RNA sequence: GGGAACGACUCGAGUAGAGUCGAAAACAGCGUACUGGCGUUACUGGAACAGUAUCGGGUAACCGGAGUGCAACUGAUUAUUGACGAUAAAGGUGCGUUGGAUUGCGUUUUACAGGCACGGCUGGAAGUCCGUUCAGUAGUUCGCUACUGAACGGACAAAAGAAACAACAACAACAAC
Reactivity to DMS in 0.01 (KOAc 150mM, MgCl2 10mM, bicine 150mM(pH8.5), 24C), signal-to-noise 2, nucleotides 027 to 126: c040a080g000c120g020u010a020c020u000g010g010c090g000u010u020a050c120u030g020g030a060a080c120a060g030u010a080u010c020g020g000g020u010a070a060c080c000g020g010a090g000u020g000c120a070a040c060u010g020a100u020u020a100u010u010g030a070c080g000a090u000a050a080a140g000g010u000g000c040g000u000u000g000g040a120u010u010g000c040g030u000u000u000u000a080c060a060g000g010c070a050c050g000g000c060u010g020g040a100a100
Reactivity to 2A3 in 0.01 (KOAc 150mM, MgCl2 10mM, bicine 150mM(pH8.5), 24C), signal-to-noise 2, nucleotides 027 to 126: c010a000g000c010g040u040a050c020u070g080g000c080g050u050u040a030c020u060g060g080a040a030c030a060g040u050a130u070c010g040g000g050u010a020a040c000c010g010g020a070g040u150g000c090a090a060c060u030g030a050u060u100a030u120u110g030a030c030g000a020u090a150a200a070g030g000u040g040c010g000u080u030g000g040a050u000u160g000c010g010u060u070u010u140a040c030a000g020g020c030a050c070g030g050c030u020g090g010a030a080
Chemical mapping of a 177-nucleotide RNA with DMS and 2A3. It was measured as part of the RMDB library OK2TST. For DMS, 1,753 sequencing reads were counted.